[RMDB]
RNA sequence: GGGAACGACUCGAGUAGAGUCGAAAAGAAAAUAGGCAAAGGCAGCUCAGUCGGUAGAGCAGCAGGACAGAAACCUGCAGCGAGAGGGAUCAAGACCCUGCUCGCGCAAAAACCGAAGUUAAAAAAAGCUAAGUAAUAUCUUCGGAUAUUACUUAGCAAAAGAAACAACAACAACAAC
Reactivity to 2A3 in 0.01 (KOAc 150mM, MgCl2 10mM, bicine 150mM(pH8.5), 24C), signal-to-noise 3, nucleotides 027 to 126: g040a020a080a050a050u180a050g030g030c070a070a060a040g080g000c030a010g010c010u000c010a020g050u010c020g020g010u010a010g010a010g040c030a010g000c000a000g000g040a030c050a170g240a050a070a030c000c000u000g000c000a020g010c000g000a000g000a000g000g020g010a030u190c090a090a030g130a130c010c000c010u040g170c000u010c000g000c010g000c010a050a070a010a000a010c010c030g000a030a020g060u130u160a000a050a020a030a030a050a010
Reactivity to DMS in 0.01 (KOAc 150mM, MgCl2 10mM, bicine 150mM(pH8.5), 24C), signal-to-noise 3, nucleotides 027 to 126: g000a040a060a070a100u010a070g010g020c030a030a070a080g010g010c110a080g000c010u000c000a080g010u000c010g000g010u000a030g000a160g020c020a110g000c000a000g020g010a080c040a090g000a080a130a080c050c010u000g000c010a250g000c010g000a020g000a060g000g000g000a080u000c200a080a170g000a120c010c010c000u000g000c000u000c000g000c020g000c110a030a010a060a060a010c030c010g010a030a140g010u000u010a000a000a070a130a040a070a150